[RMDB]
RNA sequence: GGGAACGACUCGAGUAGAGUCGAAAAGAUAUGGAACCUAUUAAAGUCCAACAGCAGCUUCGGAAACGAAGCUGACAUGGACAAAUAUGGUUCCUAAGUCAAAGUACUGCCGUUCGCGGCAGUACAAGAUUACAGUAUGGUUCGCCAUACUGUAAUCAAAAGAAACAACAACAACAAC
Reactivity to 2A3 in 0.01 (KOAc 150mM, MgCl2 10mM, bicine 150mM(pH8.5), 24C), signal-to-noise 4, nucleotides 027 to 126: g020a020u080a050u120g000g000a010a010c000c010u010a030u030u100a300a200a050g000u000c010c010a070a040c080a210g100c000a000g000c000u000u000c010g030g000a040a090a080c010g000a000a010g000c000u000g010a010c000a060u070g000g000a000c020a000a020a000u140a060u130g000g000u010u000c000c000u010a110a010g010u010c060a170a040a050g000u000a000c000u000g010c010c010g030u040u110c300g020c010g120g000c000a000g000u000a000c000a000a010
Reactivity to DMS in 0.01 (KOAc 150mM, MgCl2 10mM, bicine 150mM(pH8.5), 24C), signal-to-noise 8, nucleotides 027 to 126: g000a060u000a300u010g000g010a010a000c000c000u000a010u000u000a100a160a180g000u000c000c010a040a120c280a200g000c000a010g000c000u000u010c000g010g000a140a110a210c010g010a010a000g010c000u000g000a010c110a220u000g000g010a010c000a040a030a020u000a020u010g030g010u000u000c000c000u000a020a120g000u000c030a100a150a180g000u000a000c000u000g000c000c010g040u000u010c280g030c020g010g000c010a000g000u010a000c000a040a060